Description: An RNA of 177 nucleotides, treated with 2A3 and DMS and read out base by base. The DMS profile rests on 1,607 reads. Source: RMDB library OK1LIB, as collected in RNAgym. The RNA was probed in 150 mM KOAc, 10 mM MgCl2 and 150 mM bicine (pH 8.5) at 24 C. The 2A3 profile rests on 1,522 reads.
[RMDB]
RNA sequence: GGGAACGACUCGAGUAGAGUCGAAAAGAAGAGACCGCCACUAGGAGUCAGGGUUCAGACACGAUCCAAGAGAACACGGUUACACUGACUGUGAAGCGGAAGAGGCAAAGAGAGUGGCGGAAGAGAAGAUCCACCUGGAUUUCGAUCCAGGUGGAUCAAAAGAAACAACAACAACAAC
Reactivity to 2A3 in 0.01 (KOAc 150mM, MgCl2 10mM, bicine 150mM(pH8.5), 24C), signal-to-noise 3, nucleotides 027 to 126: g140a020a000g170a000g030a060c000c010g050c000c000a020c030u070a010g150g000a030g050u050c010a020g050g000g050u070u100c050a020g040a040c050a020c110g030a010u020c050c000a160a110g130a060g010a060a000c050a000c030g030g010u030u030a000c110a010c080u040g010a010c000u020g070u130g210a120a020g010c030g070g060a030a040g130a020g080g000c010a020a140a000g130a000g000a010g020u000g000g010c030g000g000a020a000g000a000g000a070a060
Reactivity to DMS in 0.01 (KOAc 150mM, MgCl2 10mM, bicine 150mM(pH8.5), 24C), signal-to-noise 1, nucleotides 027 to 126: g010a150a080g040a300g010a120c000c000g030c040c010a020c010u000a060g020g000a010g000u000c040a000g010g010g000u000u040c160a020g000a020c010a010c130g000a120u010c080c040a080a200g030a140g000a040a020c000a000c000g000g000u000u050a030c080a010c060u000g010a060c000u000g000u020g010a100a120g000c030g000g000a110a020g000a170g060g000c000a080a140a100g040a150g010a010g020u000g000g020c000g000g020a020a020g000a060g060a100a100